[RMDB]
An RNA of 177 nucleotides, treated with 2A3 and DMS and read out base by base.
RNA sequence: GGGAACGACUCGAGUAGAGUCGAAAAACAGAUGGCUGCAGGGAGCCUGCAGCAUGCCUGCCAGGGAGGGAGCUGACAGCCGCUGGCAGCAGGACAGCCGAGGCACUGCUUGACUCCGGAGCCACUCCCUAGGGGGUGAAUUCGUUCACCCCCUAGGAAAAGAAACAACAACAACAAC
Reactivity to 2A3 in 0.01 (KOAc 150mM, MgCl2 10mM, bicine 150mM(pH8.5), 24C), signal-to-noise 2, nucleotides 027 to 126: a000c080a010g120a130u080g060g000c010u110g050c060a050g040g050g040a080g050c000c030u010g020c000a000g000c030a000u020g020c010c020u030g000c060c020a040g020g040g030a300g030g020g020a080g050c060u080g130a040c030a040g070c040c030g130c090u040g020g010c000a000g030c030a020g000g130a060c030a040g040c020c030g050a060g000g030c000a020c040u030g010c010u050u050g040a230c030u000c000c000g020g000a010g000c000c010a020c020u090c020
Reactivity to DMS in 0.01 (KOAc 150mM, MgCl2 10mM, bicine 150mM(pH8.5), 24C), signal-to-noise 2, nucleotides 027 to 126: a160c120a100g010a110u000g000g010c000u010g030c060a060g010g000g010a050g010c020c010u010g010c010a010g010c070a020u000g000c040c010u000g010c120c030a100g000g010g010a090g000g010g000a130g000c070u010g020a050c070a090g010c040c090g050c070u010g000g000c010a060g010c050a060g000g000a210c120a050g000c040c120g020a080g020g000c030a090c040u000g000c020u000u000g000a050c020u000c030c000g000g020a090g000c020c020a090c120u000c070
2A3 adducts were read by reverse transcription with SuperScript II with manganese.